[RMDB]
This 177-nucleotide RNA was probed chemically with DMS.

RNA sequence: GGGAACGACUCGAGUAGAGUCGAAAACGACGGCCGCUCGACAACGGACCAGAUCUUUUUCGUGCGGCAAAUCCUCCAGAAAUGCCGUGAGUACCAGGUCCCUACGCACCAUUUGUUCAUCGAUUUAAGCCUCCAUUUACUUCGGUAAAUGGAGGCUAAAAGAAACAACAACAACAAC
Reactivity to DMS in 0.01 (KOAc 150mM, MgCl2 10mM, bicine 150mM(pH8.5), 24C), signal-to-noise 1, nucleotides 027 to 126: c060g020a100c150g000g030c000c020g030c010u000c080g010a070c210a050a090c070g020g000a140c020c080a130g010a200u000c000u000u000u000u000u020c000g040u030g000c050g000g000c000a020a020a200u000c010c060u000c220c170a170g000a020a110a130u000g000c020c030g010u020g020a020g070u010a180c070c060a120g000g020u000c000c010c060u000a050c130g000c050a100c090c050a120u000u000u000g000u010u000c050a120u000c080g000a230u010u000u000a170
Values cover nucleotides 27 to 126.